Chemical mapping of a 177-nucleotide RNA with DMS and 2A3. For 2A3, 527 sequencing reads were counted.
RNA sequence: GGGAACGACUCGAGUAGAGUCGAAAAAGUUUCUUCGAGAGGAGGGAUGGACCGUAUAGUAUCGCGGAUCCUGGUAAAAGUAGCAGAAUAGAAUGGUGAAAAUCCAUUCCGCCGAAAGGGCAAAGGUGAACUGGCCUUAUUUCGAUAAGGCCAGUUCAAAAGAAACAACAACAACAAC
Reactivity to DMS in 0.01 (KOAc 150mM, MgCl2 10mM, bicine 150mM(pH8.5), 24C), signal-to-noise 1, nucleotides 027 to 126: a130g010u030u040u000c010u000u060c000g040a160g010a140g040g000a000g010g010g010a020u000g020g000a000c030c000g070u040a090u050a200g000u070a090u010c120g040c020g000g000a070u000c000c000u010g000g020u000a060a060a130a110g000u000a000g000c000a050g000a080a100u040a030g050a000a000u000g000g000u000g000a160a110a090a070u000c000c000a000u000u000c000c170g000c000c030g020a010a050a100g000g000g000c000a100a020a050g000g000u070
Reactivity to 2A3 in 0.01 (KOAc 150mM, MgCl2 10mM, bicine 150mM(pH8.5), 24C), signal-to-noise 1, nucleotides 027 to 126: a000g010u000u000u000c000u130u070c060g100a120g000a000g160g000a000g030g030g030a100u070g030g000a000c000c000g000u060a050u050a080g160u040a000u070c010g030c070g000g000a190u060c000c000u000g030g000u100a030a030a030a030g060u010a000g070c030a000g100a070a130u280a070g000a040a000u000g000g000u000g000a010a010a010a010u010c000c000a000u030u000c010c000g000c000c000g140a120a020a050g000g000g000c070a020a020a020g220g130u070

Overview
Conditions: 150 mM KOAc, 10 mM MgCl2 and 150 mM bicine (pH 8.5), 24 C. 2A3 adducts were read by reverse transcription with SuperScript II with manganese. Source: RMDB library RFM100, as collected in RNAgym.